[RMDB]
RNA sequence: GGGAACGACUCGAGUAGAGUCGAAAAGAAAAGCCUAGCAGCCCUCCUGAUGAUUCUUCUUCCUGAGCGCUCUAGUGAUGAGCAAACUGAGCCUCUAAGAAGUUGACUGAAGGGGUUGCUUCCUCAAGAAAAAAUUAGGAUUCGUCCUAAUUUUUUCAAAAGAAACAACAACAACAAC
Reactivity to 2A3 in 0.01 (KOAc 150mM, MgCl2 10mM, bicine 150mM(pH8.5), 24C), signal-to-noise 6, nucleotides 027 to 126: g100a000a160a000a010g070c020c040u030a010g000c000a000g000c010c000c020u090c030c050u050g020a040u020g070a120u120u060c000u010u000c000u010u000c010c020u010g000a000g000c150g000c030u010c060u110a020g020u020g050a150u140g040a060g100c060a050a030a020c010u000g000a000g000c000c000u000c010u010a030a020g000a000a000g010u010u010g030a030c000u020g020a020a000g010g000g000g000u000u000g000c000u030u060c010c010u050c020a080a110
Reactivity to DMS in 0.01 (KOAc 150mM, MgCl2 10mM, bicine 150mM(pH8.5), 24C), signal-to-noise 3, nucleotides 027 to 126: g000a140a080a080a150g020c030c030u010a040g020c000a020g000c030c000c060u040c060c060u010g010a210u010g000a200u020u030c000u000u020c000u000u010c040c060u000g000a030g010c270g020c000u000c000u040a030g030u010g000a140u040g030a200g000c230a080a130a020c010u000g010a030g000c010c000u000c000u010a110a080g000a000a050g010u000u000g010a060c010u000g010a270a020g000g000g010g000u000u000g010c020u000u020c050c020u000c100a050a230
Background: An RNA of 177 nucleotides, treated with 2A3 and DMS and read out base by base. Reactivities are given for positions 27 through 126. Reactivities are rounded to 0.1 and cut off at 0 and 3.